[RMDB]
RNA sequence: GGGAACGACUCGAGUAGAGUCGAAAAGCAGGUACUGAAUUCUUGUUCUGCUUGAUCUUGGGCUAGCAGGUACAUGAACCCAUCUUUUCUCAACCAGUGGAGAUCCUGGCUCAGUGCAGUCAUGUGACAAGCCUAAGGUUUUCGAACCUUAGGCUUGAAAAGAAACAACAACAACAAC
Reactivity to 2A3 in 0.01 (KOAc 150mM, MgCl2 10mM, bicine 150mM(pH8.5), 24C), signal-to-noise 1, nucleotides 027 to 126: g010c040a010g040g100u100a010c050u130g180a150a210u110u080c040u140u110g030u040u000c020u020g030c000u000u020g030a010u000c000u070u110g090g060g010c030u010a000g030c020a020g070g000u050a040c010a100u050g040a040a040c060c000c000a090u090c020u000u020u040u000c030u030c040a100a100c030c020a060g000u070g040g040a060g020a040u010c010c030u000g000g030c000u030c030a100g060u110g070c020a000g050u090c030a080u210g070u150g100a050
Reactivity to DMS in 0.01 (KOAc 150mM, MgCl2 10mM, bicine 150mM(pH8.5), 24C), signal-to-noise 3, nucleotides 027 to 126: g020c140a020g000g010u010a070c060u020g010a120a170u000u010c070u010u000g000u000u000c000u000g000c010u010u010g010a050u010c050u000u010g020g000g010c040u010a070g020c040a030g020g010u000a030c060a080u000g000a070a130c050c020c040a070u000c020u010u000u000u000c030u000c040a090a110c060c070a070g020u000g010g010a090g010a080u000c040c030u000g000g010c040u010c050a090g010u000g000c040a050g000u010c030a040u000g010u000g010a190